[RMDB]
An RNA of 207 nucleotides, treated with 2A3 and DMS and read out base by base. The 2A3 profile rests on 1,089 reads. Values cover nucleotides 27 to 156. Conditions: 150 mM KOAc, 10 mM MgCl2 and 150 mM bicine (pH 8.5), 24 C. The data come from the RNA Mapping Database (RMDB), library OK3TST.
RNA sequence: GGGAACGACUCGAGUAGAGUCGAAAAGGUGUCCAUCAACAAAAAGAUGGGAAAACAUCCACACUAUGGAAUACUGCUCCAAAGAAAGAACAGAAUCAUUGCUCCAUGCAAAAACAUGGACAAAUCUCAAAAACAUCAUGCCAAACAGAGGAAGUCAUAUUACUCCCCAGUUCGCUGGGGAGUAAUAAAAAGAAACAACAACAACAAC
Reactivity to 2A3 in 0.01 (KOAc 150mM, MgCl2 10mM, bicine 150mM(pH8.5), 24C), signal-to-noise 2, nucleotides 027 to 156: g070g000u010g000u000c020c000a020u000c020a010a180c040a050a180a060a010a080g020a020u050g010g020g050a020a160a000a000c030a050u050c020c000a040c000a010c070u100a110u170g010g030a020a030u080a200c050u050g030c020u000c030c010a110a070a020g090a080a080a030g000a050a030c040a090g070a000a050u110c070a070u100u090g010c020u020c000c000a000u000g030c020a000a030a000a150a130c010a020u010g000g010a000c000a020a100a050u050c060u010c050a040a070a010a020a030c020a030u120c010a020u080g040c040c020a110a040a040c020a090g020a030g030g000a070a020g050u010c010a050
Reactivity to DMS in 0.01 (KOAc 150mM, MgCl2 10mM, bicine 150mM(pH8.5), 24C), signal-to-noise 1, nucleotides 027 to 156: g010g010u000g010u020c030c010a010u000c000a030a110c030a080a070a290a140a300g050a010u000g010g010g000a070a010a160a110c060a020u010c000c040a010c050a070c060u000a130u000g000g000a120a130u000a040c030u000g030c000u010c020c120a110a040a120g000a160a050a070g000a090a110c010a050g000a100a140u010c090a110u000u010g030c190u000c000c000a010u000g000c020a090a100a130a060a100c000a000u010g000g000a030c020a030a090a080u000c040u000c030a030a030a030a050a050c060a050u000c090a080u010g010c050c000a000a150a090c040a060g040a140g080g010a040a070g000u000c050a080